Structure probing data (DMS and 2A3) for a 177-nucleotide construct. For DMS the reverse transcriptase was MarathonRT. Conditions: 150 mM KOAc, 10 mM MgCl2 and 150 mM bicine (pH 8.5), 24 C. The 2A3 profile rests on 4,961 reads. Values cover nucleotides 27 to 126. 2A3 adducts were read by reverse transcription with SuperScript II with manganese. Source: RMDB library OK2TST, as collected in RNAgym.

[RMDB]
RNA sequence: GGGAACGACUCGAGUAGAGUCGAAAAGGACAUUCUGGACCCCACGGGGCGAGCUUGGGAAGCCGCUGCAAGGGCCACACCUGCAGGGCCCGGGGGCUGUGGGCAGAUGGCACUCCUAGGAACCACAUCCCUAAUUAUGGUUCGCCAUAAUUAGGGAAAAAGAAACAACAACAACAAC
Reactivity to DMS in 0.01 (KOAc 150mM, MgCl2 10mM, bicine 150mM(pH8.5), 24C), signal-to-noise 7, nucleotides 027 to 126: g020g010a080c060a050u010u000c020u000g010g000a190c300c000c010c030a060c080g010g000g010g010c030g000a090g010c020u000u000g000g010g010a240a220g010c010c010g010c020u000g010c110a110a140g000g010g010c000c060a080c070a120c060c050u000g020c060a100g000g000g000c020c010c020g010g000g010g000g010c040u000g010u000g010g000g010c030a020g000a060u000g010g020c070a100c120u000c020c010u000a100g010g000a110a150c040c040a080c210a200
Reactivity to 2A3 in 0.01 (KOAc 150mM, MgCl2 10mM, bicine 150mM(pH8.5), 24C), signal-to-noise 3, nucleotides 027 to 126: g020g000a030c020a060u100u050c030u060g170g060a230c010c020c000c000a030c020g040g000g020g020c030g030a100g010c050u060u060g080g080g050a040a020g040c000c030g060c030u040g010c030a070a120g030g010g000c040c020a080c020a040c030c050u110g030c090a080g000g000g050c020c010c000g000g000g000g010g000c030u030g000u030g020g020g000c010a010g020a040u040g040g000c050a030c090u010c000c010u040a050g040g080a040a030c010c060a030c030a130